Description: Structure probing data (DMS and 2A3) for a 177-nucleotide construct. Conditions: 150 mM KOAc, 10 mM MgCl2 and 150 mM bicine (pH 8.5), 24 C.
RNA sequence: GGGAACGACUCGAGUAGAGUCGAAAAAGCUGUUGAGCCACGAGAAAUUGUUGCGGACCCGGUGCGAGCGGACCUGGCGGUUGAUCCGGGCGCGCCGCUGCGGCUGCGGGUCGCGCAGCUGCGCGUCGAGAGACGUUGAUUUCGAUCAACGUCUCUCAAAAGAAACAACAACAACAAC
Reactivity to DMS in 0.01 (KOAc 150mM, MgCl2 10mM, bicine 150mM(pH8.5), 24C), signal-to-noise 2, nucleotides 027 to 126: a160g020c030u000g000u000u020g010a060g000c130c100a020c070g020a090g010a090a120a020u030u010g010u000u020g000c020g010g000a100c010c030c010g000g000u020g000c050g000a110g010c030g010g030a130c040c040u000g020g000c110g010g000u020u070g010a120u030c000c000g020g030g000c160g010c200g000c040c040g010c010u000g020c000g010g020c020u040g000c060g000g000g080u020c090g010c000g020c000a040g000c000u000g000c010g000c050g000u020c030
Reactivity to 2A3 in 0.01 (KOAc 150mM, MgCl2 10mM, bicine 150mM(pH8.5), 24C), signal-to-noise 2, nucleotides 027 to 126: a030g040c040u010g030u090u080g030a040g000c000c030a020c040g020a020g040a050a100a070u130u080g060u050u060g040c010g010g000a000c000c000c010g000g060u070g020c100g020a050g000c000g010g050a050c010c030u030g020g000c010g020g060u030u070g060a110u020c010c010g030g000g000c010g000c000g000c000c000g020c070u200g110c010g050g000c060u120g080c020g010g050g100u110c060g000c000g000c120a000g000c000u010g000c000g010c000g010u100c110